Chemical mapping of a 207-nucleotide RNA with 2A3 and DMS.

RNA sequence: GGGAACGACUCGAGUAGAGUCGAAAAAAGAUGCCAUAAAUCGUAAAAGUAAUCUUUCACAUGUAGGCACUAUCACGAACUCCAAUCUUUGUAUUGAAGUCACAAUCCCCUGCUGGGAGGGUGAUAAGGCUGAACAAGGCGUUUGUAACCUGGCCGCAUUGUGGCCUAGGUUCGCCUAGGCCACAAUAAAAGAAACAACAACAACAAC
Reactivity to 2A3 in 0.01 (KOAc 150mM, MgCl2 10mM, bicine 150mM(pH8.5), 24C), signal-to-noise 3, nucleotides 027 to 156: a000a000g090a020u050g060c020c000a060u190a080a080a060u160c080g120u070a030a040a060a070g080u150a110a160u110c030u050u090u150c060a080c020a080u170g090u100a030g010g000c020a040c060u040a050u030c020a020c120g060a050a020c030u030c040c000a020a030u000c040u030u270u270g060u050a050u010u050g040a040a010g020u020c020a020c010a090a060u000c000c030c020c030u080g030c040u040g020g010g010a030g010g050g000u010g000a000u010a060a040g000g000c020u020g040a040a010c040a090a070g060g000c030g000u010u080u170g110u060a020a010c020c020u000g020g010c020c050g030c020
Reactivity to DMS in 0.01 (KOAc 150mM, MgCl2 10mM, bicine 150mM(pH8.5), 24C), signal-to-noise 2, nucleotides 027 to 156: a060a080g000a050u020g000c000c020a130u000a090a140a100u000c100g000u000a050a040a050a060g020u010a100a120u010c010u000u010u000c040a040c050a110u040g030u000a240g000g010c010a020c000u000a080u000c020a040c020g020a040a020c020u000c010c000a010a050u000c020u000u010u020g020u010a040u000u000g010a030a030g010u000c040a050c080a110a170u000c010c000c000c080u020g010c100u020g040g030g000a040g000g010g010u000g010a030u000a010a030g000g040c020u000g030a070a170c090a070a080g030g000c030g030u000u000u010g020u010a050a050c010c010u000g010g020c050c020g000c090
The DMS profile rests on 5,003 reads. For 2A3, 1,074 sequencing reads were counted. The reactions ran in a buffer of 150 mM KOAc, 10 mM MgCl2 and 150 mM bicine (pH 8.5), at 24 C.